[RMDB]
RNA sequence: GGGAACGACUCGAGUAGAGUCGAAAAAUGGCUGGGUGGCAAUUGGAAACGGGCUGGCUUCUGGGUUCGGAUGGAUUUGUGCGCUCCGCUUGCCGCGGCUAGCUCCUCGUAACUGCAAGGCUCGAGACACUUUUACCGAUUUCGAUCGGUAAAAGUGAAAAGAAACAACAACAACAAC
Reactivity to 2A3 in 0.01 (KOAc 150mM, MgCl2 10mM, bicine 150mM(pH8.5), 24C), signal-to-noise 5, nucleotides 027 to 126: a020u110g010g010c050u040g010g020g050u080g000g020c020a030a130u100u060g050g040a070a080a060c050g020g030g010c020u030g030g000c000u050u030c030u080g130g000g010u100u080c070g020g030a060u070g040g040a080u060u060u120g080u070g000c030g010c010u040c010c010g010c040u050u110g020c010c010g050c020g010g010c020u020a040g010c000u020c010c020u020c020g030u050a070a070c040u040g020c070a070a050g060g000c000u010c030g010a020g020a000
Reactivity to DMS in 0.01 (KOAc 150mM, MgCl2 10mM, bicine 150mM(pH8.5), 24C), signal-to-noise 3, nucleotides 027 to 126: a040u050g010g000c000u000g000g020g000u000g000g000c070a080a080u020u000g030g020a040a090a100c140g010g000g010c020u000g000g010c030u000u000c060u010g010g000g020u010u020c050g030g000a090u020g000g000a120u010u030u010g020u010g010c070g000c070u000c020c010g010c130u020u020g010c070c030g000c210g000g000c090u020a040g040c020u020c030c030u020c040g010u000a080a080c070u000g000c050a080a100g000g000c050u030c040g000a090g000a300